[RMDB]
RNA sequence: GGGAACGACUCGAGUAGAGUCGAAAAACCCUGAUUUUGGUUCGUGGCUCCUCCUGACCCUGAGAACCUCUGUCGCCUCAGAUCAGAACCGUCGUCGCGUUUCGGGCUACAGCCUGUUGCUGGACUCGAAUAUUCUGAUCUUCGGAUCAGAAUAUUCAAAAGAAACAACAACAACAAC
Reactivity to 2A3 in 0.01 (KOAc 150mM, MgCl2 10mM, bicine 150mM(pH8.5), 24C), signal-to-noise 9, nucleotides 027 to 126: a010c040c010c000u050g160a160u030u090u120u130g070g010u030u040c040g030u070g030g010c020u020c030c000u040c010c010u050g070a080c030c010c000u040g040a030g030a070a040c010c020u040c030u040g100u070c030g030c010c010u030c030a030g010a150u050c010a020g030a080a050c030c000g030u050c030g020u020c010g000c010g040u010u060u090c020g010g010g010c010u060a060c010a030g020c000c010u080g030u060u060g020c040u030g010g050a040c020u010c070
Reactivity to DMS in 0.01 (KOAc 150mM, MgCl2 10mM, bicine 150mM(pH8.5), 24C), signal-to-noise 7, nucleotides 027 to 126: a040c020c000c010u030g010a080u020u010u010u010g000g010u010u000c040g020u010g000g010c030u000c020c050u000c040c010u020g000a120c080c040c010u000g000a100g010a080a130c080c020u020c040u000g010u010c040g000c040c010u010c060a050g020a110u020c080a080g000a100a100c070c040g010u010c040g010u000c040g010c090g000u000u020u010c040g000g000g010c030u020a100c130a100g010c020c050u010g010u010u010g000c030u000g000g000a110c060u000c140
Annotation:
An RNA of 177 nucleotides, treated with 2A3 and DMS and read out base by base. The data come from the RNA Mapping Database (RMDB), libraries RFM100 and RFMREP. Conditions: 150 mM KOAc, 10 mM MgCl2 and 150 mM bicine (pH 8.5), 24 C. For 2A3 the reverse transcriptase was SuperScript II with manganese. Values cover nucleotides 27 to 126.